[RMDB]
This 177-nucleotide RNA was probed chemically with DMS and 2A3. The 2A3 profile rests on 710 reads.
RNA sequence: GGGAACGACUCGAGUAGAGUCGAAAAGGCUUAUCAAGAGAGGGGGAGUGACUGGCGCGAAGAACCCCGGCAACCAGAAAUGGUGCCAAUUCCUGCAGCGGAAACGUUGAAAGAUGAGCCGAAACAAAAUAGGCACCAGUUUCGACUGGUGCCUAUUAAAAGAAACAACAACAACAAC
Reactivity to DMS in 0.01 (KOAc 150mM, MgCl2 10mM, bicine 150mM(pH8.5), 24C), signal-to-noise 1, nucleotides 027 to 126: g000g010c000u000u000a020u000c000a120a180g000a170g040a150g000g000g020g000g000a110g040u010g000a080c050u000g000g000c020g000c040g040a080a070g000a130a280c000c000c000c000g000g020c010a060a060c060c040a000g000a150a020a160u000g000g050u000g000c000c010a070a250u000u110c010c010u020g000c000a020g060c040g000g000a150a020a060c000g020u000u010g000a120a010a080g000a010u000g000a010g000c000c000g010a110a090a080c260a120a060
Reactivity to 2A3 in 0.01 (KOAc 150mM, MgCl2 10mM, bicine 150mM(pH8.5), 24C), signal-to-noise 1, nucleotides 027 to 126: g000g000c000u040u000a000u000c000a080a080g110a070g000a080g140g030g000g000g000a080g010u130g040a010c040u090g040g010c030g000c000g040a000a120g020a010a040c020c000c000c000g000g000c030a100a130c000c000a000g020a010a050a160u010g000g000u030g020c030c000a010a020u000u040c010c000u070g060c000a010g000c020g040g000a030a050a000c020g010u060u110g080a110a040a110g020a020u000g000a000g030c010c010g000a040a020a000c020a020a120
For 2A3 the reverse transcriptase was SuperScript II with manganese. For DMS, 1,343 sequencing reads were counted. Source: RMDB library OK1LIB, as collected in RNAgym.